[RMDB]
RNA sequence: GGGAACGACUCGAGUAGAGUCGAAAAUCACAGACAUUAAUGCAGUAGUACUAGUGCUGAGAGAGAAAAUUAAAUGCGUUCUUGGUCUUUGAACCAGAGGUGGUUAUGCCUUAUAUACUAGGACGGAGUUUUUGAGUCUCUUCGGAGACUCAAAAACAAAAGAAACAACAACAACAAC
Reactivity to 2A3 in 0.01 (KOAc 150mM, MgCl2 10mM, bicine 150mM(pH8.5), 24C), signal-to-noise 2, nucleotides 027 to 126: u040c000a030c040a070g170a050c040a030u090u080a050a050u120g010c020a050g120u140a030g020u030a110c020u050a050g040u030g070c010u020g000a010g050a000g000a000g040a110a080a060a000u240u190a060a040a020u170g060c050g000u000u030c000u080u060g000g000u010c020u060u090u160g030a030a000c000c000a000g000a020g010g000u080g030g090u200u120a050u140g000c020c000u090u030a160u000a000u000a060c110u040a010g140g000a020c100g000g080a080
Reactivity to DMS in 0.01 (KOAc 150mM, MgCl2 10mM, bicine 150mM(pH8.5), 24C), signal-to-noise 2, nucleotides 027 to 126: u000c050a130c030a070g000a050c020a070u000u000a050a090u000g000c000a130g000u030a120g020u020a080c050u000a000g030u010g030c080u000g000a090g030a060g010a100g030a060a100a050a080u000u060a070a100a160u020g020c000g010u050u000c070u000u030g000g000u000c020u000u000u000g020a090a060c000c000a070g000a050g000g020u010g000g040u040u110a020u040g000c000c010u000u000a060u020a140u020a060c100u000a060g000g000a040c000g000g000a120

The record gives the reactivity of an RNA of 177 nucleotides to 2A3 and DMS. DMS adducts were read by reverse transcription with MarathonRT.